The record gives the reactivity of an RNA of 177 nucleotides to DMS and 2A3. DMS adducts were read by reverse transcription with MarathonRT. The DMS profile rests on 2,088 reads. For 2A3, 1,534 sequencing reads were counted. For 2A3 the reverse transcriptase was SuperScript II with manganese.
RNA sequence: GGGAACGACUCGAGUAGAGUCGAAAAGCUCCUGCGAACAAGAGCGGAUAUCAACCGACUUUUGGUACCGAAGCACGUGUCUAUGUCCCAUUUUUAGAUCGGGUGGCGCUUAAUGCGCGUAUCGGGAUGAUAGUUAGUCCUUCGGGACUAACUAUCAAAAAGAAACAACAACAACAAC
Reactivity to DMS in 0.01 (KOAc 150mM, MgCl2 10mM, bicine 150mM(pH8.5), 24C), signal-to-noise 3, nucleotides 027 to 126: g020c050u020c010c030u010g050c130g020a150a110c030a030a050g010a020g000c040g000g010a120u020a100u010c220a100a110c030c020g000a130c000u000u000u000u000g010g000u010a100c070c040g010a050a190g000c040a060c090g010u020g000u000c050u000a080u010g010u000c030c020c020a130u000u010u010u000u010a100g010a090u000c070g010g010g020u000g000g040c060g020c020u000u000a070a100u020g020c020g000c010g010u000a050u010c030g000g000g000a140
Reactivity to 2A3 in 0.01 (KOAc 150mM, MgCl2 10mM, bicine 150mM(pH8.5), 24C), signal-to-noise 2, nucleotides 027 to 126: g020c010u040c040c000u020g060c050g050a080a040c000a020a010g000a010g020c030g020g000a040u080a040u300c060a050a080c000c010g300a300c300u030u060u040u050g050g020u120a120c000c040g020a050a000g050c040a020c100g070u150g050u020c020u090a110u100g060u110c030c010c020a020u120u060u040u040u160a070g010a120u050c020g000g030g010u030g040g000c000g000c040u070u240a130a040u300g030c040g030c000g020u070a020u040c010g010g020g000a020